[RMDB]
RNA sequence: GGGAACGACUCGAGUAGAGUCGAAAAUCCUUCUGGGGAGCCGCAUGCCCUUCACUGGGUGUGUCGGGGAACCAGGACUUUUACUUUGAAAAAAUUAGAGUGUUCAAAGCAGGCCUAUGCUCGAAUAAUUUGGUGAUUGUUUCGACAAUCACCAAAUAAAAGAAACAACAACAACAAC
Reactivity to DMS in 0.01 (KOAc 150mM, MgCl2 10mM, bicine 150mM(pH8.5), 24C), signal-to-noise 3, nucleotides 027 to 126: u010c020c000u010u010c020u020g000g000g000g000a300g000c000c010g020c020a040u000g040c030c010c000u000u000c300a150c160u010g000g010g000u000g000u010g000u060c030g000g000g010g020a300a210c010c000a030g010g010a080c080u020u000u000u000a050c050u000u000u000g000a000a020a100a040a090a080u000u060a140g000a110g030u030g040u000u020c050a040a070a110g030c090a060g020g000c020c050u020a040u020g000c020u010c090g000a100a070u030a020
Reactivity to 2A3 in 0.01 (KOAc 150mM, MgCl2 10mM, bicine 150mM(pH8.5), 24C), signal-to-noise 3, nucleotides 027 to 126: u030c000c000u020u070c000u000g000g000g000g000a000g080c000c000g000c000a000u010g040c000c000c000u060u140c170a210c300u080g000g030g000u000g000u020g090u160c050g000g000g010g000a010a010c000c000a000g000g020a000c010u050u150u040u080a060c020u050u090u120g050a050a060a070a030a060a070u120u170a130g040a050g080u190g120u040u120c070a090a060a000g020c030a050g060g070c000c030u180a110u140g020c020u000c010g020a090a060u170a110
An RNA of 177 nucleotides, treated with DMS and 2A3 and read out base by base. It was measured as part of the RMDB libraries RFM100 and RFMREP. The 2A3 profile rests on 1,498 reads. In probing experiments dimethyl sulfate is read out at A N1 and C N3, which are open when not base-paired.